Chemical mapping of a 177-nucleotide RNA with DMS and 2A3. Reactivities are rounded to 0.1 and cut off at 0 and 3. For DMS, 7,021 sequencing reads were counted. The RNA was probed in 150 mM KOAc, 10 mM MgCl2 and 150 mM bicine (pH 8.5) at 24 C. Source: RMDB library M2PK50, as collected in RNAgym. 2A3 adducts were read by reverse transcription with SuperScript II with manganese.
RNA sequence: GGGAACGACUCGAGUAGAGUCGAAAAGAACAUGCGUUCGCGCAUGUUCAAAUAAAAUCAGCGGUAAUCGAGGCGUAAAUAUUACCGGUGAACGCCUCGAUAAAAGAGCUGGCUUCGGCCAGCUCAACUUACUAUGCAUGUUCGCAUGCAUAGUAAGAAAAGAAACAACAACAACAAC
Reactivity to DMS in 0.01 (KOAc 150mM, MgCl2 10mM, bicine 150mM(pH8.5), 24C), signal-to-noise 5, nucleotides 027 to 126: g000a010a000c000a000u000g000c000g030u000u000c230g030c010g020c000a010u000g010u000u000c000a030a090a080u020a040a050a100a070u000c090a050g020c080g010g020u000a110a030u000c010g010a010g000g000c010g010u000a040a080a070u000a070u000u000a150c090c060g020g010u000g000a170a020c010g000c000c000u000c010g000a010u000a020a060a110a140g010a010g030c000u000g010g000c000u000u010c200g020g000c000c000a010g000c000u000c010a000a040
Reactivity to 2A3 in 0.01 (KOAc 150mM, MgCl2 10mM, bicine 150mM(pH8.5), 24C), signal-to-noise 5, nucleotides 027 to 126: g000a000a000c000a000u010g010c000g020u030u070c210g000c010g010c090a000u010g010u000u000c000a000a000a000u050a000a030a000a070u120c050a020g090c040g140g100u130a040a020u010c000g000a000g000g000c010g020u020a020a100a080u210a090u150u150a080c050c050g090g030u070g040a030a010c000g000c000c000u000c000g000a000u000a010a030a000a010g010a000g000c000u000g010g010c000u020u040c190g080g000c010c000a000g000c000u000c000a000a000